[RMDB]
RNA sequence: GGGAACGACUCGAGUAGAGUCGAAAAGAAAGAAACAGUUGGCUAGCUGAACGCACGAGGAUUAAAGCCAACCGUGCGAGUCGGAAUGCACGACCGACAAGAAAAGCCCUACAAUCGUGCAAGAAAACCCAUGCUGGGUAUUCGUACCCAGCAUGGGAAAAGAAACAACAACAACAAC
Reactivity to 2A3 in 0.01 (KOAc 150mM, MgCl2 10mM, bicine 150mM(pH8.5), 24C), signal-to-noise 2, nucleotides 027 to 126: g020a000a060a000g130a030a200a000c050a000g000u040u040g010g020c060u060a040g030c050u090g050a180a000c000g020c000a000c020g010a060g090g010a050u120u280a220a010a020g110c000c000a010a000c090c000g030u000g020c000g050a030g000u010c000g000g130a060a240u070g000c050a010c000g000a000c000c000g000a000c020a000a000g040a060a070a000a010g010c000c000c040u050a030c040a080a030u010c010g010u000g010c000a000a000g020a000a070a000a010
Reactivity to DMS in 0.01 (KOAc 150mM, MgCl2 10mM, bicine 150mM(pH8.5), 24C), signal-to-noise 1, nucleotides 027 to 126: g000a210a080a020g070a280a140a180c020a040g020u000u000g000g000c020u000a050g000c060u010g000a210a120c040g000c000a000c010g000a230g020g010a150u000u070a040a300a120g000c040c030a130a080c070c020g000u000g000c120g000a000g000u000c000g000g000a150a270u010g000c090a000c040g000a060c010c000g030a000c000a160a060g000a020a160a000a100g040c000c000c270u060a010c170a000a060u000c010g010u000g000c000a050a140g000a000a090a160a220
Source information: Conditions: 150 mM KOAc, 10 mM MgCl2 and 150 mM bicine (pH 8.5), 24 C. This 177-nucleotide RNA was probed chemically with 2A3 and DMS. The 2A3 profile rests on 1,551 reads. It was measured as part of the RMDB library OK1LIB.